[RMDB]
RNA sequence: GGGAACGACUCGAGUAGAGUCGAAAAGAUAUGGACCCAUUUGUCAGCCUAAGACACCACAUCGAUCUCGGAAACGAGGGAGUGGUGCUUAGGCUUGGAUUUAAUGGGUCCUAAGUCAAAAUCUGGUAUAGUGAGGUUCGCCUCACUAUACCAGAAAGGACUACGCAUAGUUCGCUAUGCGUAGUCCAAAAGAAACAACAACAACAAC
Reactivity to 2A3 in 0.01 (KOAc 150mM, MgCl2 10mM, bicine 150mM(pH8.5), 24C), signal-to-noise 1, nucleotides 027 to 156: g030a020u090a060u120g000g000a000c020c000c000a010u010u000u010g000u000c010a000g030c000c000u000a030a040g030a150c000a000c000c000a040c000a190u300c030g080a120u030c020u000c000g000g050a130a130a100c020g000a000g000g000g000a040g010u000g000g000u000g000c000u000u010a000g000g030c000u000u000g000g010a000u000u140u220a000a010u000g010g000g000u000c000c000u000a000a010g010u000c040a030a000a040a230u000c000u000g000g010u000a000u000a000g000u020g000a000g050g040u060u170c240g090c020c000u000c000a000c000u000a000u000a000c000c000a000g000a000a000a000